[RMDB]
RNA sequence: GGGAACGACUCGAGUAGAGUCGAAAAGCACUAUUCUCAAAAGAAAUAUCAAGUAGGCUGAUUGCUGGCUUUGGUCUAUUAUUUUGAAUAGUUUUGACAGGAAUCAUCAAUCUUAUUGAUCAAGCCCAAGCUUCAUAUACUUCGGUAUAUGAAGCUUAAAAGAAACAACAACAACAAC
Reactivity to 2A3 in 0.01 (KOAc 150mM, MgCl2 10mM, bicine 150mM(pH8.5), 24C), signal-to-noise 2, nucleotides 027 to 126: g010c030a000c110u080a000u060u060c070u100c020a070a050a030a020g070a010a100a030u070a030u060c020a090a000g070u020a030g130g000c040u070g150a250u100u300g000c000u020g000g040c020u080u040u040g070g010u000c020u000a040u070u010a020u020u210u050u030g000a030a000u030a030g020u000u060u100u080g050a040c010a030g060g100a080a040u070c010a000u050c000a110a000u000c030u170u250a120u060u060g010a030u030c040a050a000g030c000c000c000
Reactivity to DMS in 0.01 (KOAc 150mM, MgCl2 10mM, bicine 150mM(pH8.5), 24C), signal-to-noise 3, nucleotides 027 to 126: g000c190a100c070u000a050u000u010c050u000c080a050a050a070a120g000a130a070a070u010a040u000c010a020a050g010u000a120g010g010c040u000g000a120u010u000g010c020u010g020g030c040u000u010u010g020g010u000c060u000a010u000u000a100u000u000u000u010g000a030a040u000a030g010u000u000u000u010g000a080c110a090g000g010a070a060u010c070a040u000c050a050a080u000c090u000u000a090u010u000g000a020u000c130a060a060g000c000c020c070

Structure probing data (2A3 and DMS) for a 177-nucleotide construct. Conditions: 150 mM KOAc, 10 mM MgCl2 and 150 mM bicine (pH 8.5), 24 C. 2A3 adducts were read by reverse transcription with SuperScript II with manganese. The DMS profile rests on 2,820 reads. 2A3 is a SHAPE reagent: it acylates the 2'-hydroxyl of flexible nucleotides of all four kinds.